[RMDB]
RNA sequence: GGGAACGACUCGAGUAGAGUCGAAAAAAGUAGUUAAAUGUACCAUUUCAAGGCACGUUACGCUUGUAUCUACGCACUUCGUACAUGCGUACGCGUACAUACAUGCAUACACACGUAAGUAUGUGUAGCAGGUUUUACUAUUCGUAGUAAAACCUGCAAAAGAAACAACAACAACAAC
Reactivity to 2A3 in 0.01 (KOAc 150mM, MgCl2 10mM, bicine 150mM(pH8.5), 24C), signal-to-noise 3, nucleotides 027 to 126: a000a000g170u220a070g020u110u150a120a130a070u110g010u060a010c000c030a080u100u110u180c110a120a060g070g040c020a000c070g050u080u040a030c060g010c050u010u000g010u020a020u040c040u030a020c040g000c020a040c060u080u100c120g060u060a060c020a130u210g070c080g000u000a020c060g000c020g020u020a030c000a030u080a020c030a030u070g000c010a020u040a050c020a000c020a000c070g050u070a020a110g050u080a030u070g010u010g030u000a040
Reactivity to DMS in 0.01 (KOAc 150mM, MgCl2 10mM, bicine 150mM(pH8.5), 24C), signal-to-noise 3, nucleotides 027 to 126: a050a050g010u010a080g000u010u000a050a050a030u000g010u010a040c000c020a110u010u010u020c230a140a130g010g000c040a040c040g010u000u000a070c090g010c030u000u000g010u000a010u010c210u000a020c060g000c090a110c150u010u000c210g000u000a040c160a070u000g010c110g010u000a020c070g020c040g000u000a010c120a030u000a040c070a030u010g000c020a090u000a010c100a010c100a030c110g000u010a030a120g020u000a060u000g010u000g010u000a070
Chemical mapping of a 177-nucleotide RNA with 2A3 and DMS.
2A3 is a SHAPE reagent: it acylates the 2'-hydroxyl of flexible nucleotides of all four kinds.
For DMS the reverse transcriptase was MarathonRT.
2A3 adducts were read by reverse transcription with SuperScript II with manganese.
For DMS, 2,320 sequencing reads were counted.